[RMDB]
RNA sequence: GGGAACGACUCGAGUAGAGUCGAAAAACGGAUAAACAACUAAUAAUUAAACCUUUUGUGUGCGAAACGUGGUUGUUUAACGUACUCUUUAAUCGCUCCGAAGCGAACACACUGUUUUGAUUUUAGGUCAUACUCAAUCGUUCGCGAUUGAGUAUGAAAAAGAAACAACAACAACAAC
Reactivity to DMS in 0.01 (KOAc 150mM, MgCl2 10mM, bicine 150mM(pH8.5), 24C), signal-to-noise 4, nucleotides 027 to 126: a030c010g000g000a130u000a020a020a030c020a010a010c010u000a030a030u020a080a190u020u010a060a250a050c010c030u010u020u010u040g020u030g030u000g020c240g000a030a050a120c220g010u000g000g020u000u000g010u000u000u000a010a070c020g010u000a080c060u020c020u000u010u030a070a040u010c010g000c000u000c150c160g030a130a060g010c020g000a040a040c140a050c180a060c120u010g000u000u010u000u010g010a070u000u000u010u000a040g010g010
Reactivity to 2A3 in 0.01 (KOAc 150mM, MgCl2 10mM, bicine 150mM(pH8.5), 24C), signal-to-noise 9, nucleotides 027 to 126: a000c020g010g000a240u050a030a010a000c000a000a010c020u060a030a130u080a120a050u180u100a110a050a040c010c000u090u120u190u190g190u060g030u040g090c130g050a070a020a030c140g030u040g010g000u010u010g000u010u000u000a010a000c000g000u050a070c010u030c000u040u130u100a110a130u060c010g020c010u070c100c110g080a110a010g020c010g030a090a020c050a010c000a020c050u050g070u030u040u030u030g190a270u030u040u020u170a040g050g010

Description: This 177-nucleotide RNA was probed chemically with DMS and 2A3. Source: RMDB libraries RFM100 and RFMREP, as collected in RNAgym. For DMS the reverse transcriptase was MarathonRT. The reactions ran in a buffer of 150 mM KOAc, 10 mM MgCl2 and 150 mM bicine (pH 8.5), at 24 C.